An RNA of 207 nucleotides, treated with 2A3 and DMS and read out base by base. The RNA was probed in 150 mM KOAc, 10 mM MgCl2 and 150 mM bicine (pH 8.5) at 24 C. The DMS profile rests on 1,769 reads.
RNA sequence: GGGAACGACUCGAGUAGAGUCGAAAAGUUGUCUGCGGAAGAAAAAGCACUACUUGCAAAUCAGGAGAAAGUUUUAGAGCUUGCGAAACAGAAGGCUGAGAUUGGCGAUCAGAUUGUUAAGCAGCAGCAGUUGAACGCUCUUACCGAUAAAUCACUGUACAACUCCUUGUUUCGACAAGGAGUUGUAAAAAGAAACAACAACAACAAC
Reactivity to 2A3 in 0.01 (KOAc 150mM, MgCl2 10mM, bicine 150mM(pH8.5), 24C), signal-to-noise 1, nucleotides 027 to 156: g020u050u010g010u020c100u060g020c010g090g040a020a060g010a050a200a040a010a000g010c020a010c010u030a040c010u050u040g050c030a030a140a250u120c010a070g150g000a030g030a060a100a040g050u080u060u100u080a090g000a000g010c010u050u060g000c040g020a050a020a020c040a030g100a120a030g080g000c040u040g000a000g000a120u070u230g030g000c020g000a030u000c040a000g120a200u020u050g000u020u010a020a000g000c040a010g000c030a030g000c020a020g030u000u020g010a050a000c040g000c040u000c010u060u080a040c030c060g040a040u060a050a070a010u170c070a040c120u130g030
Reactivity to DMS in 0.01 (KOAc 150mM, MgCl2 10mM, bicine 150mM(pH8.5), 24C), signal-to-noise 1, nucleotides 027 to 156: g030u020u000g030u000c040u000g000c040g000g000a110a180g030a050a030a060a170a180g020c010a040c020u000a050c000u000u020g000c100a010a080a150u000c020a020g000g000a100g000a090a050a110g020u000u000u020u020a140g010a140g020c020u000u010g070c020g000a130a060a120c060a100g000a020a150g020g000c020u000g010a130g000a090u010u000g010g010c020g010a130u010c040a000g000a210u000u020g010u010u000a030a150g020c080a110g000c040a040g030c010a050g000u000u010g000a080a090c060g000c050u000c060u000u000a130c050c040g000a100u000a050a040a090u000c050a040c030u030g000